[RMDB]
RNA sequence: GGGAACGACUCGAGUAGAGUCGAAAAUAGCUAUAUAAUGCGCAUCGCGCGCGUAAUUACGAUAUAUGCAUAUAUAUGCGCCGUAGCUAUAAUGCAUUAGCUAGCGCUACGCGUACGGCUAUACGGCUAAACGCGAAGCGUUCGCGCUUCGCGUUUAAAAAGAAACAACAACAACAAC
Reactivity to DMS in 0.01 (KOAc 150mM, MgCl2 10mM, bicine 150mM(pH8.5), 24C), signal-to-noise 2, nucleotides 027 to 126: u010a040g000c000u000a140u010a060u000a050a090u010g030c020g030c050a020u000c170g010c080g010c100g000c030g000u000a080a150u000u000a090c100g010a110u000a060u020a000u000g010c050a010u000a080u000a030u000a010u000g000c030g000c040c180g010u010a060g000c070u030a030u000a030a010u010g020c030a020u000u010a030g010c090u000a180g010c050g020c010u000a020c090g010c000g010u010a020c060g000g000c000u010a020u000a040c040g000g010c040
Reactivity to 2A3 in 0.01 (KOAc 150mM, MgCl2 10mM, bicine 150mM(pH8.5), 24C), signal-to-noise 1, nucleotides 027 to 126: u030a000g000c010u040a010u010a030u060a300a080u200g060c030g000c020a030u140c130g000c030g000c030g040c010g100u050a090a150u050u240a030c050g010a010u040a000u000a010u160g040c040a020u110a000u000a000u000a000u240g070c040g010c070c100g020u040a010g040c010u020a010u020a050a030u040g060c000a010u050u080a030g000c030u030a010g040c020g030c050u020a040c040g000c000g000u000a040c090g000g000c000u070a100u000a100c070g020g000c020